[RMDB]
RNA sequence: GGGAACGACUCGAGUAGAGUCGAAAAUGCAUCCGGAACAAAUAUGGGAUGCUCCAUUUCCUCAAGCGGUUUGCGCCAAGCUACAAGAUUUCUAUGAGAAGUGGAUGAACGGCGAGCGCCCGAAAAUGAUUUUGUCUACUCCGCCGCAGCACGGCAAUAUUAUAAUAGUGUUCGCACUAUUAUAAUAAAAAGAAACAACAACAACAAC
Reactivity to DMS in 0.01 (KOAc 150mM, MgCl2 10mM, bicine 150mM(pH8.5), 24C), signal-to-noise 2, nucleotides 027 to 156: u010g040c010a000u000c020c000g050g010a180a300c070a040a160a110u000a110u000g010g010g000a030u000g030c000u010c010c030a160u000u020u000c010c010u000c070a090a090g010c090g050g010u010u060u000g040c050g000c130c030a200a200g020c030u000a110c030a050a140g010a080u000u000u000c010u000a150u010g030a130g020a050a070g050u010g050g010a090u010g020a070a040c050g030g020c020g020a110g050c110g040c040c090c030g000a010a040a060a080u010g010a180u000u010u000u000g030u000c020u000a050c010u000c000c060g020c000c050g010c060a110g010c090a300c150g030g000c030a070a280
Reactivity to 2A3 in 0.01 (KOAc 150mM, MgCl2 10mM, bicine 150mM(pH8.5), 24C), signal-to-noise 2, nucleotides 027 to 156: u130g000c000a000u010c020c000g060g080a140a090c110a090a190a130u280a130u230g090g000g000a000u000g010c000u000c000c000a030u000u020u020c000c040u080c010a070a080g040c020g040g010u120u190u160g030c000g000c000c030a110a070g010c050u030a070c040a080a010g050a230u100u130u070c050u080a110u210g030a030g020a190a060g040u030g080g020a040u060g070a110a030c040g010g040c010g030a120g010c040g060c010c000c010g060a030a020a000a050u070g070a090u030u140u060u170g030u000c010u020a020c010u030c040c080g010c030c010g010c080a020g030c020a010c020g020g000c000a000a040

Chemical mapping of a 207-nucleotide RNA with DMS and 2A3.